An RNA of 207 nucleotides, treated with 2A3 and read out base by base. The 2A3 profile rests on 624 reads. 2A3 adducts were read by reverse transcription with SuperScript II with manganese. The RNA was probed in 150 mM KOAc, 10 mM MgCl2 and 150 mM bicine (pH 8.5) at 24 C. The data come from the RNA Mapping Database (RMDB), library RFM130.
[RMDB]
RNA sequence: GGGAACGACUCGAGUAGAGUCGAAAAAAAAAAAGCAUCUUUCGACCAGCGAUCAGUAAGUCCACCAGAUUGGGAUUAAUCUUCAAAAGUUGCAACUUAAAUAUUCCCAGUAAUGUCCACCUACAAGGAGCCUCUGAAUGGGUGGGUGGAAAAAAAAGAUAUUAGGGAAGUUCGCUUCCCUAAUAUCAAAAGAAACAACAACAACAAC
Reactivity to 2A3 in 0.01 (KOAc 150mM, MgCl2 10mM, bicine 150mM(pH8.5), 24C), signal-to-noise 1, nucleotides 027 to 156: a020a020a020a000a010a020a020g010c030a020u050c010u040u080u040c040g070a090c070c010a050g020c060g010a010u060c030a030g060u120a230a010g000u030c030c030a040c010c030a100g090a250u090u170g010g010g000a000u080u100a020a060u060c070u160u080c030a040a080a040a000g030u030u030g030c050a100a090c070u040u160a030a060a030u000a120u050u000c000c010c000a030g020u070a000a070u090g030u060c000c000a010c000c000u030a040c020a020a030g020g000a050g090c040c000u120c020u110g090a140a070u100g030g010g010u000g000g000g030u040g020g010a040a000a050a000a000a050a000a000